[RMDB]
RNA sequence: GGGAACGACUCGAGUAGAGUCGAAAACGGCCGCUUCACCGAACCUGAAGAUCUGCAGACGAAGUACGAGUAGGGGCCGGCAAAUUUACCGGCUCGACGCGCAGAAGCGCCGAGAUUUAGCGGCGGGCAGCCGCAAAGGGUUCGCCCUUUGCGGCUGAAAAGAAACAACAACAACAAC
Reactivity to 2A3 in 0.01 (KOAc 150mM, MgCl2 10mM, bicine 150mM(pH8.5), 24C), signal-to-noise 1, nucleotides 027 to 126: c010g000g000c020c020g070c030u080u020c020a010c040c010g070a130a080c000c030u050g080a060a070g030a210u070c020u050g040c030a040g000a070c020g020a210a040g020u100a020c070g070a000g000u040a050g040g000g000g060c030c020g010g000c130a180a210a030u090u160u140a060c000c010g050g020c000u000c010g040a030c020g010c020g000c040a010g040a180a020g060c010g010c000c030g020a070g020a050u130u160u100a060g000c010g000g000c120g030g010g000
Reactivity to DMS in 0.01 (KOAc 150mM, MgCl2 10mM, bicine 150mM(pH8.5), 24C), signal-to-noise 2, nucleotides 027 to 126: c070g020g020c030c020g000c010u010u000c050a160c070c050g020a110a100c040c150u020g010a130a080g010a080u000c030u000g020c040a070g010a080c080g010a070a070g000u010a080c090g000a060g000u000a110g030g010g010g030c030c000g000g020c100a050a080a170u010u000u000a090c000c000g000g000c000u010c000g010a030c030g020c040g010c100a110g000a090a100g000c010g010c010c000g010a050g000a140u010u000u000a060g010c070g010g000c030g000g010g020
Source: RMDB library OK2TST, as collected in RNAgym. This 177-nucleotide RNA was probed chemically with 2A3 and DMS. Values cover nucleotides 27 to 126.